[RMDB]
RNA sequence: GGGAACGACUCGAGUAGAGUCGAAAAGGCUAAGGUUGCUGGUAUUGGAAAAUACUACAAGACUAAUACUUGUAGGUUUGUAGAAUUAGAUGACCAAGGGCAUCAUUUAGACUCCUAUUUUGUCGUUAAAUCGAGGUGUUCGCACCUCGAAAAAGAAACAACAACAACAAC
Reactivity to 2A3 in 0.01 (KOAc 150mM, MgCl2 10mM, bicine 150mM(pH8.5), 24C), signal-to-noise 6, nucleotides 027 to 129: g030g000c030u040a050a020g010g000u010u030g010c030u040g000g080u120a160u130u080g250g030a030a020a010a030u130a190c000u000a000c010a000a000g040a040c070u250a080a140u150a190c000u020u010g020u050a010g010g030u000u040u030g050u080a010g020a030a030u060u020a050g180a280u090g020a020c000c000a010a030g000g000g000c010a040u020c010a000u070u030u030a030g000a010c000u020c030c010u020a040u020u070u020u050g020u020c000g020u000u070a000a070a070
Reactivity to DMS in 0.01 (KOAc 150mM, MgCl2 10mM, bicine 150mM(pH8.5), 24C), signal-to-noise 1, nucleotides 027 to 129: g040g010c040u040a010a010g020g020u000u020g040c000u020g040g010u000a000u000u000g000g000a080a070a050a050u050a120c000u020a040c010a020a000g000a090c110u020a110a110u040a130c040u010u030g020u010a030g010g020u000u070u030g030u020a000g040a040a070u020u000a060g020a000u070g020a050c000c000a110a090g000g000g000c020a000u040c030a080u000u000u000a140g020a060c020u040c060c010u090a040u010u040u080u000g030u000c020g030u000u060a070a080a140
About this RNA:
Chemical mapping of a 170-nucleotide RNA with 2A3 and DMS. For 2A3 the reverse transcriptase was SuperScript II with manganese. Values are in units of 0.01, from 0 to 300, in steps of 10. Values cover nucleotides 27 to 129. The DMS profile rests on 9,582 reads. 2A3 is a SHAPE reagent: it acylates the 2'-hydroxyl of flexible nucleotides of all four kinds.